An RNA of 177 nucleotides, treated with 2A3 and DMS and read out base by base. For DMS, 2,381 sequencing reads were counted. For 2A3 the reverse transcriptase was SuperScript II with manganese. Conditions: 150 mM KOAc, 10 mM MgCl2 and 150 mM bicine (pH 8.5), 24 C.

[RMDB]
RNA sequence: GGGAACGACUCGAGUAGAGUCGAAAAUCAGCAUUUGAUGGUACUAUGUAUGGUGCCUUUAUGGAUAAACAAGUGCACCAAGUUCAGUUAACAGACAAAUACUGCAGUGUUAAUGUAGUAGCUUGGCGACAUGUUUUUUGUUCGCAAAAAACAUGUCAAAAGAAACAACAACAACAAC
Reactivity to 2A3 in 0.01 (KOAc 150mM, MgCl2 10mM, bicine 150mM(pH8.5), 24C), signal-to-noise 3, nucleotides 027 to 126: u070c020a010g000c000a020u000u040u020g060a060u040g000g000u010a010c020u020a010u240g200u090a130u160g030g000u010g000c000c000u030u070u020a110u040g060g050a040u150a070a070a010c020a030a000g020u020g060c000a010c010c000a010a000g000u010u050c020a010g000u000u030a090a010c000a010g200a070c020a040a090a030u120a140c100u060g060c060a050g120u020g060u270u060a050a040u020g060u070a090g010u010a000g040c010u000u010g000g030c030
Reactivity to DMS in 0.01 (KOAc 150mM, MgCl2 10mM, bicine 150mM(pH8.5), 24C), signal-to-noise 3, nucleotides 027 to 126: u020c050a100g020c030a030u010u000u000g000a120u000g000g010u000a040c010u000a070u010g000u010a090u010g000g000u000g020c000c020u010u000u000a100u020g020g020a190u000a080a120a130c110a030a010g020u020g010c010a230c010c000a010a030g000u000u000c050a140g000u000u000a030a070c070a030g010a120c040a030a060a100u000a060c070u000g020c090a100g010u010g020u000u010a060a090u000g010u000a060g040u000a030g010c020u000u000g000g010c240